[RMDB]
RNA sequence: GGGAACGACUCGAGUAGAGUCGAAAAGAUAUGGAUUUCGCUUUGAUCUGGAGCGUGAAACUCGGAAACGAGUUACACGCGAUGAAAGGGAGCGAAAUCCUAAGUCAAACCCUCCUUCGGGAGGGAAUCAUUGGCGAUUGUUCGCAAUCGCCAAUGAAAAAGAAACAACAACAACAAC
Reactivity to DMS in 0.01 (KOAc 150mM, MgCl2 10mM, bicine 150mM(pH8.5), 24C), signal-to-noise 1, nucleotides 027 to 126: g000a060u000a250u010g000g000a020u000u000u000c000g010c000u000u010u020g000a200u020c010u010g000g010a160g000c050g030u010g000a080a020a000c010u000c000g020g000a100a090a160c010g010a040g000u000u000a080c000a000c000g010c000g000a080u000g020a110a100a090g000g020g010a010g000c000g000a000a000a000u000c000c000u000a000a070g000u000c020a110a070a060c040c000c000u000c000c000u000u010c230g020g030g000a010g000g000g000a000a000
Source: RMDB library TTRDEL, as collected in RNAgym. The record gives the reactivity of an RNA of 177 nucleotides to DMS. For DMS the reverse transcriptase was MarathonRT. The RNA was probed in 150 mM KOAc, 10 mM MgCl2 and 150 mM bicine (pH 8.5) at 24 C.